[RMDB]
RNA sequence: GGGAACGACUCGAGUAGAGUCGAAAAUGGAUUACAAAUCACUAAUCCACCUAGUAGUGAUUUGUACUAGGACGGUAUAUCGGUACGGUGGACAUGCGAAAGCAUGUCCAUCGUACUGAUAUACCGAGCACGAAGAUGGGUUCGCCCAUCUUCGUGCAAAAGAAACAACAACAACAAC
Reactivity to DMS in 0.01 (KOAc 150mM, MgCl2 10mM, bicine 150mM(pH8.5), 24C), signal-to-noise 1, nucleotides 027 to 126: u010g000g000a100u000u000a000c020a000a000a010u000c030a040c010u000a070a020u020c080c050a180c090c120u010a140g030u000a020g020u000g000a010u000u000u000g000u000a020c170u000a080g000g050a220c010g000g000u000a000u010a010u000c010g000g000u000a000c020g000g010u000g000g010a010c000a010u000g000c000g050a120a010a190g030c010a000u000g000u000c000c000a000u000c000g000u010a000c000u000g000a000u000a000u000a000c010c020g000a000
The record gives the reactivity of an RNA of 177 nucleotides to DMS. In probing experiments dimethyl sulfate is read out at A N1 and C N3, which are open when not base-paired. It was measured as part of the RMDB library OK2TRN. The RNA was probed in 150 mM KOAc, 10 mM MgCl2 and 150 mM bicine (pH 8.5) at 24 C.